[RMDB]
RNA sequence: GGGAACGACUCGAGUAGAGUCGAAAAAUUGCAUGCCGUAAGUGUAAUUUAGCUUUCCGGUUAACCACCUCAAAGCUACGCGCUAAUGAUAAUAUCUUAUCAGUUAGAUUCACUGCUAACAAAAUUGAAACGGCGGUCUUCGGACCGCCGAAAAGAAACAACAACAACAAC
Reactivity to DMS in 0.01 (KOAc 150mM, MgCl2 10mM, bicine 150mM(pH8.5), 24C), signal-to-noise 1, nucleotides 027 to 129: a060u040u050g000c010a030u000g000c000c130g020u040a000a110g000u000g040u000a070a100u020u000u050a000g080c050u010u010u010c000c130g000g000u000u030a100a050c130c050a120c020c000u010c300a090a000a000g000c010u000a020c100g000c110g030c030u130a120a020u020g030a050u000a020a000u000a300u000c110u020u000a000u020c030a010g000u010u090a050g000a130u070u000c110a020c030u020g010c030u020a010a050c100a120a090a070a170u090u090g080a180a120a040
Reactivity to 2A3 in 0.01 (KOAc 150mM, MgCl2 10mM, bicine 150mM(pH8.5), 24C), signal-to-noise 3, nucleotides 027 to 129: a000u210u130g000c000a000u100g000c010c020g050u040a000a120g000u010g000u020a000a000u060u020u010a010g000c000u000u000u000c000c000g020g000u000u000a080a040c000c000a030c030c000u070c050a030a020a000g040c040u090a020c090g110c020g000c040u020a010a070u020g040a000u000a010a070u070a090u170c150u200u000a020u000c000a090g030u000u000a010g000a060u100u070c030a020c000u060g030c010u000a010a050c100a030a020a030a080u130u190g030a050a050a000

The record gives the reactivity of an RNA of 170 nucleotides to DMS and 2A3. The reactions ran in a buffer of 150 mM KOAc, 10 mM MgCl2 and 150 mM bicine (pH 8.5), at 24 C. The DMS profile rests on 2,283 reads. It was measured as part of the RMDB library 15KLIB. 2A3 is a SHAPE reagent: it acylates the 2'-hydroxyl of flexible nucleotides of all four kinds. For DMS the reverse transcriptase was MarathonRT. For 2A3, 2,735 sequencing reads were counted.